Notes
Structure probing data (DMS and 2A3) for a 177-nucleotide construct. DMS adducts were read by reverse transcription with MarathonRT. For 2A3, 3,976 sequencing reads were counted. The reactions ran in a buffer of 150 mM KOAc, 10 mM MgCl2 and 150 mM bicine (pH 8.5), at 24 C. It was measured as part of the RMDB library TTRDES. Reactivities are given for positions 27 through 126.
[RMDB]
RNA sequence: GGGAACGACUCGAGUAGAGUCGAAAAGAUAUGGACUAUCGUUAAGGGAGCUAAACUGUCGGAAACGACAGUUUAGCAUCGAUCUUAACGAGUAGUCCUAAGUCAAACAGUCAGUUCGCUGACUGAAGAAUCAGGAGGAGUUCGCUCCUCCUGAUUCAAAAGAAACAACAACAACAAC
Reactivity to DMS in 0.01 (KOAc 150mM, MgCl2 10mM, bicine 150mM(pH8.5), 24C), signal-to-noise 3, nucleotides 027 to 126: g010a090u010a300u000g000g010a020c040u000a030u010c000g020u010u000a000a000g100g000g000a020g040c000u000a000a000a010c010u000g000u010c010g030g000a160a130a150c000g010a010c000a010g000u000u010u010a000g000c000a070u000c210g000a040u020c000u000u000a000a010c000g030a080g010u000a020g000u010c000c010u000a010a100g010u010c030a210a160a270c020a010g010u000c000a010g000u000u010c290g050c010u000g000a010c020u000g000a120a090
Reactivity to 2A3 in 0.01 (KOAc 150mM, MgCl2 10mM, bicine 150mM(pH8.5), 24C), signal-to-noise 1, nucleotides 027 to 126: g020a010u100a040u170g000g000a000c000u010a020u060c010g000u000u000a010a010g040g070g000a040g000c030u000a000a000a020c000u010g000u020c010g020g020a140a060a070c000g000a000c000a010g010u000u000u010a000g010c000a000u020c000g010a000u020c010u030u000a010a000c010g040a000g000u040a000g000u000c010c000u000a020a000g000u000c060a120a040a120c000a010g000u030c000a000g030u050u130c230g090c160u010g000a000c040u000g030a060a060